[RMDB]
RNA sequence: GGGAACGACUCGAGUAGAGUCGAAAAUUAGAACUCUCAUAAGCUGCUGGAGAAAUGCAAAACAAUGCAAUCACGUUGGAAAACACUUCCUCAAAAAGUUAAACCUAUAGUUACCACAUGUCCCAGCAAGUCCACUCCUAGAUAUAUACUCAGGAGACUAGUAUUAGGCAUUCGUGCCUAAUACUAGAAAAGAAACAACAACAACAAC
Reactivity to DMS in 0.01 (KOAc 150mM, MgCl2 10mM, bicine 150mM(pH8.5), 24C), signal-to-noise 1, nucleotides 027 to 156: u020u000a060g000a080a070c010u000c020u000c040a100u010a110a200g010c070u000g030c150u000g050g000a120g030a050a070a060u000g000c030a030a190a230a140c060a050a050u020g000c050a170a140u030c130a200c110g030u030u000g010g030a130a110a200a070c030a030c000u000u030c000c010u040c000a070a100a090a050a120g040u030u010a010a010a010c040c020u010a080u000a080g030u000u000a030c050c080a060c050a080u000g040u000c030c000c000a150g020c030a030a060g010u000c070c020a060c000u000c000c030u010a000g000a020u010a180u020a140u000a100c100u000c020a020g000g020a080g040a150
Reactivity to 2A3 in 0.01 (KOAc 150mM, MgCl2 10mM, bicine 150mM(pH8.5), 24C), signal-to-noise 3, nucleotides 027 to 156: u110u050a070g050a120a030c020u020c000u020c060a070u100a250a080g010c020u030g010c020u010g020g040a180g020a090a030a010u080g000c010a020a060a090a080c050a080a110u070g020c000a010a060u040c020a010c090g050u080u010g030g010a020a100a110a000c030a020c040u060u030c020c040u110c060a100a120a050a030a030g020u040u080a070a100a060c030c010u090a080u060a190g040u050u070a060c010c020a020c040a130u110g040u030c000c000c010a000g000c060a100a000g030u030c070c020a050c030u000c000c000u020a030g020a070u050a000u020a010u020a200c020u000c050a000g000g010a020g040a030
An RNA of 207 nucleotides, treated with DMS and 2A3 and read out base by base. The RNA was probed in 150 mM KOAc, 10 mM MgCl2 and 150 mM bicine (pH 8.5) at 24 C. For 2A3, 1,781 sequencing reads were counted. DMS adducts were read by reverse transcription with MarathonRT.